[RMDB]
RNA sequence: GGGAACGACUCGAGUAGAGUCGAAAAAUCGAACAAGUGUUUCUCGUGCACGCAGCUUUUUCAGAAAGAACUGACACCGAGCGAUGUAGGGAAACUGAAUAGGCUUGUGAUACCUAAGAAGUAUGCAGACAUGUAUGUGCUUCGGCACAUACAUGUCAAAAGAAACAACAACAACAAC
Reactivity to 2A3 in 0.01 (KOAc 150mM, MgCl2 10mM, bicine 150mM(pH8.5), 24C), signal-to-noise 2, nucleotides 027 to 126: a000u030c020g030a040a110c020a030a080g000u030g000u080u030u020c050u020c030g140u070g000c020a000c020g030c020a000g100c000u110u050u020u050u000c010a000g090a060a220a010g100a130a070c010u060g110a000c000a020c030c080g020a090g070c020g040a070u040g020u020a040g010g040g010a010a030a000c010u000g020a010a060u100a090g070g020c000u020u070g010u020g000a050u100a080c010c010u030a050a020g030a090a020g070u100a050u130g080c020a030
Reactivity to DMS in 0.01 (KOAc 150mM, MgCl2 10mM, bicine 150mM(pH8.5), 24C), signal-to-noise 2, nucleotides 027 to 126: a090u000c130g000a100a060c100a070a070g040u000g000u000u010u000c020u000c040g000u040g010c000a130c030g000c040a090g020c050u000u000u000u000u010c070a080g000a090a080a050g030a160a120c020u020g010a030c300a110c080c100g000a130g010c040g000a130u000g020u000a180g000g010g000a040a040a030c010u000g000a050a020u000a040g000g000c030u000u000g010u000g000a080u000a060c000c020u020a160a050g020a090a100g000u000a040u010g020c190a090
An RNA of 177 nucleotides, treated with 2A3 and DMS and read out base by base.
In probing experiments dimethyl sulfate is read out at A N1 and C N3, which are open when not base-paired.
For DMS the reverse transcriptase was MarathonRT.
Conditions: 150 mM KOAc, 10 mM MgCl2 and 150 mM bicine (pH 8.5), 24 C.
Source: RMDB library OK2TRN, as collected in RNAgym.